[RMDB]
RNA sequence: GGGAACGACUCGAGUAGAGUCGAAAAGAAACUCGUUUCGCGUUGGCUGCCUAAUUCAAGGAAUUAGCGUGCCUUCAUGCUAAGGGUUUGAUAUAUGCUAAAACCCGGUGCAUUCAUCAAUGCAGGUCUCAUCCAAAUGCCUUCGGGCAUUUGGAAAGACGCUUAUAGCGUUCGCGCUAUAAGCGUCAAAAGAAACAACAACAACAAC
Reactivity to DMS in 0.01 (KOAc 150mM, MgCl2 10mM, bicine 150mM(pH8.5), 24C), signal-to-noise 1, nucleotides 027 to 156: g060a120a010a000c030u000c080g000u000u000u000c080g010c030g030u000u000g000g010c030u000g040c130c000u000a020a020u000u020c030a140a140g100g040a040a080u020u000a080g000c030g050u020g060c040c030u000u020c110a150u010g010c040u000a300a170g120g010g020u000u000u010g000a130u000a130u000a120u030g050c120u010a170a050a100a080c000c000c020g060g010u000g000c010a020u020u000c120a140u000c070a070a080u000g000c000a020g040g000u010c050u020c000a180u000c000c000a000a010a010u020g000c000c000u000u050c300g000g030g120c000a000u000u000u010g020g000a030a030a080
Reactivity to 2A3 in 0.01 (KOAc 150mM, MgCl2 10mM, bicine 150mM(pH8.5), 24C), signal-to-noise 2, nucleotides 027 to 156: g060a010a040a000c050u030c050g040u030u090u040c020g010c060g030u020u000g030g030c040u080g100c000c030u010a000a000u020u010c080a180a120g170g010a100a040u020u000a010g050c080g080u080g000c020c000u020u030c040a080u060g000c030u030a030a050g020g010g000u000u010u040g010a030u030a030u050a020u180g070c080u100a040a040a050a090c020c030c020g000g020u020g010c010a010u010u050c020a070u060c080a100a080u120g020c030a040g020g040u070c070u050c080a080u000c000c000a000a000a000u010g000c010c000u020u060c130g010g000g000c020a000u000u000u010g000g010a000a000a000